An RNA of 177 nucleotides, treated with 2A3 and DMS and read out base by base.
For 2A3, 1,535 sequencing reads were counted.
Conditions: 150 mM KOAc, 10 mM MgCl2 and 150 mM bicine (pH 8.5), 24 C.
The DMS profile rests on 1,633 reads.
For DMS the reverse transcriptase was MarathonRT.

RNA sequence: GGGAACGACUCGAGUAGAGUCGAAAAUUAGCCCAGACUUUUGAGAGAAUAAAUACCUCUCAGCCUCUCCACCUUGGGGUGCCCUAUCCGAACACUGCAGUUUCGGUAGAAAGGCUAAGAACCUCGCCUUGCUUAAAAAGUUCGCUUUUUAAGCAAGAAAAGAAACAACAACAACAAC
Reactivity to 2A3 in 0.01 (KOAc 150mM, MgCl2 10mM, bicine 150mM(pH8.5), 24C), signal-to-noise 2, nucleotides 027 to 126: u070u060a020g030c030c020c010a040g070a190c070u030u220u180u030g000a020g000a010g000a020a040u120a130a100a030u130a090c010c020u000c000u000c000a010g010c000c000u020c010u000c060c020a120c020c040u050u130g020g040g000g010u040g000c000c000c000u000a020u000c000c010g000a000a010c100a060c140u300g050c050a040g020u040u030u010c000g000g000u000a000g020a020a020a000g010g010c000u000a040a030g060a100a070c000c010u010c020g090c010
Reactivity to DMS in 0.01 (KOAc 150mM, MgCl2 10mM, bicine 150mM(pH8.5), 24C), signal-to-noise 3, nucleotides 027 to 126: u010u000a160g000c010c000c040a220g000a100c120u010u000u010u000g010a030g010a020g000a040a020u000a130a090a170u000a180c200c000u000c000u000c000a030g020c020c000u000c010u000c040c060a070c140c150u010u000g030g000g000g020u000g000c020c020c000u000a100u010c010c010g000a010a030c070a090c180u000g010c220a130g010u000u000u000c010g000g000u010a020g000a070a140a100g000g020c010u010a030a120g000a110a160c040c010u010c040g020c230